Source: RMDB library OK2TRN, as collected in RNAgym. The record gives the reactivity of an RNA of 177 nucleotides to DMS.

RNA sequence: GGGAACGACUCGAGUAGAGUCGAAAAACGAUGCCCAGCAGCCAUUCCAGUUGGGUGAUUUGUACCAUUAGGGCACUGCAUCUUACCUUACGGAACUUAAUUUUUUCUGCUAUAGUUCACAAACGACUAAUUGGGCUGUUUUCGAACAGCCCAAUUAAAAAGAAACAACAACAACAAC
Reactivity to DMS in 0.01 (KOAc 150mM, MgCl2 10mM, bicine 150mM(pH8.5), 24C), signal-to-noise 1, nucleotides 027 to 126: a040c100g010a140u010g000c050c000c000a120g000c010a050g000c300c040a120u030u000c020c050a140g000u000u000g000g010g050u010g010a020u000u000u000g010u000a100c030c010a030u000u000a070g010g030g010c270a030c080u010g030c100a050u000c010u000u030a050c010c010u000u000a100c100g000g010a050a060c140u020u000a010a010u000u000u000u070u000u000c030u010g000c030u000a100u000a070g000u000u000c010a110c070a080a100a120c200g020a130c140

Background
The RNA was probed in 150 mM KOAc, 10 mM MgCl2 and 150 mM bicine (pH 8.5) at 24 C.